[RMDB]
RNA sequence: GGGAACGACUCGAGUAGAGUCGAAAAAACAAGCAUGAGUACGCAACCUUUGUUAGCGGUCGAAGGGCUGUCGAUGCGCUUUGGUGGGUUAUUGGCGGUGAAUAAUGUCGGCCUGAAUCUCAAUCAACACUAGGAUGCUCUUCGGAGCAUCCUAGUGAAAAGAAACAACAACAACAAC
Reactivity to DMS in 0.01 (KOAc 150mM, MgCl2 10mM, bicine 150mM(pH8.5), 24C), signal-to-noise 1, nucleotides 027 to 126: a030a040c160a040a080g000c110a070u000g000a110g000u000a080c130g000c050a060a070c040c020u000u010u000g010u000u010a080g020c100g000g040u000c100g000a020a080g010g020g020c030u000g000u000c100g030a010u000g010c010g000c030u010u020u000g000g000u020g010g000g000u000u000a030u000u010g010g040c040g000g020u010g010a070a070u000a040a080u030g040u000c060g000g010c000c040u000g010a090a060u000c060u000c020a060a090u010c280a100a110
Reactivity to 2A3 in 0.01 (KOAc 150mM, MgCl2 10mM, bicine 150mM(pH8.5), 24C), signal-to-noise 1, nucleotides 027 to 126: a020a010c120a040a000g080c110a060u150g070a020g160u050a050c040g000c030a070a050c000c010u000u110u040g190u080u040a070g030c020g030g000u050c020g030a090a000g150g090g000c070u060g000u010c000g030a020u160g130c160g000c000u160u080u020g150g000u060g020g010g060u140u030a050u190u030g020g000c020g030g000u090g020a090a040u160a120a060u180g050u020c020g020g000c020c020u000g030a070a070u020c010u000c020a220a280u140c030a100a070
Description
This 177-nucleotide RNA was probed chemically with DMS and 2A3. The reactions ran in a buffer of 150 mM KOAc, 10 mM MgCl2 and 150 mM bicine (pH 8.5), at 24 C. The data come from the RNA Mapping Database (RMDB), library OK2TST. High 2A3 reactivity points to a flexible backbone, as in loops and unpaired stretches. For DMS, 1,117 sequencing reads were counted. For 2A3, 631 sequencing reads were counted.